[RMDB]
RNA sequence: GGGAACGACUCGAGUAGAGUCGAAAAAUUAGGCUAUGGAGCUGUAUAUCCUCAACAGAACCAGGCCCACCUAAUUGUCCCACGGGAAUGGGAUUUUCCGGGUGAAUCAUAUCGGGAUCGUAGGCAACCACCAUUUACAAUUCGUUGUAAAUGGUGGAAAAGAAACAACAACAACAAC
Reactivity to DMS in 0.01 (KOAc 150mM, MgCl2 10mM, bicine 150mM(pH8.5), 24C), signal-to-noise 7, nucleotides 027 to 126: a030u000u000a030g010g010c100u000a070u000g010g010a090g030c000u000g000u000a070u010a090u000c040c020u000c110a190a040c050a030g000a050a040c030c020a060g010g000c030c030c050a300c010c010u010a020a050u000u000g000u000c000c000c000a100c140g030g010g010a080a110u000g000g000g000a080u000u000u000u000c020c010g010g000g010u000g010a110a070u010c110a070u000a070u010c060g010g000g000a050u000c070g010u000a050g010g010c120a100a170
Reactivity to 2A3 in 0.01 (KOAc 150mM, MgCl2 10mM, bicine 150mM(pH8.5), 24C), signal-to-noise 3, nucleotides 027 to 126: a000u040u030a010g010g000c010u020a080u220g010g000a050g030c010u000g080u010a110u000a020u190c000c040u070c050a030a040c000a030g020a020a030c020c000a020g100g030c020c000c000a010c000c000u020a050a040u010u040g010u010c000c000c030a020c040g080g020g050a080a140u100g010g010g080a010u080u040u050u020c030c000g040g000g020u070g120a060a090u090c090a070u110a040u180c030g010g030g010a030u050c040g060u080a040g030g000c020a040a030
An RNA of 177 nucleotides, treated with DMS and 2A3 and read out base by base. For 2A3 the reverse transcriptase was SuperScript II with manganese. High DMS reactivity at an A or C suggests that its Watson-Crick edge is free. The RNA was probed in 150 mM KOAc, 10 mM MgCl2 and 150 mM bicine (pH 8.5) at 24 C.